[RMDB]
RNA sequence: GGGAACGACUCGAGUAGAGUCGAAAAGAUAUGGAGCCGUUGGCGUUUGACGCAAUCUAUGGUAGGUUCGAAGGGUCGGAAACGACCCGUAGUUACCAUAGAUUGCCGAGCCAGAGGCUCCUAAGUCCGUGGGAAUUAGGUUCGCCUAAUUCCCACGAAAAGAAACAACAACAACAAC
Reactivity to DMS in 0.01 (KOAc 150mM, MgCl2 10mM, bicine 150mM(pH8.5), 24C), signal-to-noise 1, nucleotides 027 to 126: g000a160u000a300u000g030g000a060g000c010c010g000u000u030g000g000c000g010u020u000u030g050a290c300g000c010a000a000u000c000u000a010u000g030g010u000a000g000g020u000u020c080g000a130a300g000g000g030u000c010g000g000a060a080a230c010g010a010c000c000c000g000u000a130g010u000u000a010c010c010a000u000a000g010a010u000u030g000c000c000g000a040g010c000c000a040g000a070g000g020c000u000c000c000u000a020a130g000u010c030
The record gives the reactivity of an RNA of 177 nucleotides to DMS. For DMS the reverse transcriptase was MarathonRT. The RNA was probed in 150 mM KOAc, 10 mM MgCl2 and 150 mM bicine (pH 8.5) at 24 C.